[RMDB]
RNA sequence: GGGAACGACUCGAGUAGAGUCGAAAACGGAAGGGCACCACCAGGAGUGGAGCUUGCGGCUUAAUUUGACUCAACACGGGAAAACUUACCAGGACAAGACAUAAGAAGGAUUGACAGAUUGAUCGCUGUUGGAUCUGCCUUUCGAGGCAGAUCCAACAAAAGAAACAACAACAACAAC
Reactivity to 2A3 in 0.01 (KOAc 150mM, MgCl2 10mM, bicine 150mM(pH8.5), 24C), signal-to-noise 1, nucleotides 027 to 126: c000g000g090a000a040g140g020g000c070a070c000c000a000c000c000a000g060g000a030g080u010g000g000a050g120c040u010u050g050c010g090g000c000u010u010a000a010u000u000u000g090a050c000u000c010a060a000c020a000c070g090g000g000a030a030a030a020c110u200u180a150c000c040a020g030g050a000c000a060a030g000a040c000a170u150a040a030g060a000a030g020g000a020u000u290g010a070c040a050g150a070u000u010g030a000u030c000g000c130u000